The record gives the reactivity of an RNA of 177 nucleotides to DMS. Values cover nucleotides 27 to 126.
RNA sequence: GGGAACGACUCGAGUAGAGUCGAAAAGAUAUGGAUUAUAAACGUAGGCUUCCUACUGGAGUAACUAGUUCGGAAACGAACUAUUUACUAUGAAGGUAGGAGAGCCUACGUUUAUAAUCCUAAGUCACAUAGGUAAACGGUUCGCCGUUUACCUAUGAAAAGAAACAACAACAACAAC
Reactivity to DMS in 0.01 (KOAc 150mM, MgCl2 10mM, bicine 150mM(pH8.5), 24C), signal-to-noise 3, nucleotides 027 to 126: g000a050u000a300u010g000g000a000u000u000a010u000a000a010a010c000g010u000a020g010g010c000u000u000c000c000u010a010c000u000g020g020a000g020u000a000a020c110u000a010g010u000u020c000g000g020a140a110a280c010g010a010a010c000u000a000u000u000u000a000c000u000a240u010g010a170a190g000g010u000a020g000g010a040g000a010g010c000c000u000a000c000g010u020u000u000a000u000a000a000u000c010c000u010a010a050g000u010c040a300